[RMDB]
RNA sequence: GGGAACGACUCGAGUAGAGUCGAAAACACAUCUACAACGAAAUCCUCAAUUUCACUGCAAGCUUAGUGGAGAUGGAGACACACUCCUUCCUGGCCAAGUUCACGGGCUCCCUGAGUUCCUCCCACGUUCGCCCUGGGUUUCUAGGAUGCCAGGGAACUCAUAGCUCAUCUUCGGAUGAGCUAUGAGAAAAGAAACAACAACAACAAC
Reactivity to 2A3 in 0.01 (KOAc 150mM, MgCl2 10mM, bicine 150mM(pH8.5), 24C), signal-to-noise 1, nucleotides 027 to 156: c060a010c010a050u100c040u210a060c050a130a070c090g090a050a040a050u110c040c040u100c050a190a110u050u200u130c100a100c070u050g040c150a080a010g040c030u040u080a030g000u040g140g030a070g000a060u100g060g060a010g060a040c180a010c000a020c100u010c020c000u040u000c020c020u070g000g040c050c080a120a080g050u120u100c070a050c120g040g010g010c020u020c030c000c000u040g060a040g070u040u020c040c020u030c010c000c010a000c100g050u100u130c000g050c000c000c000u030g010g010g020u060u060u000c050u030a050g060g090a070u060g130c000c000a000g020g000g000a020a000